[RMDB]
RNA sequence: GGGAACGACUCGAGUAGAGUCGAAAAUCUUUUGACGCAAAUAAUUUGAGAAGUAUCGAAGAGCUUGGAGUGCUUAAUGCUGUCAGAUUGCAAAGUAAGGAGGAGAUGUGUAAGUUUUUGCAACUCACUGCUCCAUAGUAUUCGUACUAUGGAGCAGAAAAGAAACAACAACAACAAC
Reactivity to 2A3 in 0.01 (KOAc 150mM, MgCl2 10mM, bicine 150mM(pH8.5), 24C), signal-to-noise 2, nucleotides 027 to 126: u000c000u030u140u000u150g020a010c000g030c030a050a100a100u120a070a100u230u100u130g160a120g030a210a060g010u100a090u080c030g050a070a000g060a060g070c070u140u110g090g070a040g040u050g010c000u090u080a090a020u070g010c040u030g030u000c020a040g000a280u040u080g030c030a000a070a050g050u080a040a000g070g010a020g050g010a080g010a060u060g040u040g050u120a100a110g040u000u030u000u100u070g110c000a040a040c020u000c030a000
Reactivity to DMS in 0.01 (KOAc 150mM, MgCl2 10mM, bicine 150mM(pH8.5), 24C), signal-to-noise 3, nucleotides 027 to 126: u000c030u000u000u000u000g010a110c080g020c050a060a080a110u000a080a080u000u000u010g010a100g000a110a130g010u000a070u010c070g010a070a100g000a080g000c060u010u000g000g010a090g010u010g000c040u010u000a070a080u010g000c010u000g020u010c040a080g010a080u000u000g010c070a030a050a080g010u010a060a110g020g000a060g000g030a080g000a040u000g020u010g010u000a040a080g000u000u000u000u010u000g010c060a060a090c070u000c050a190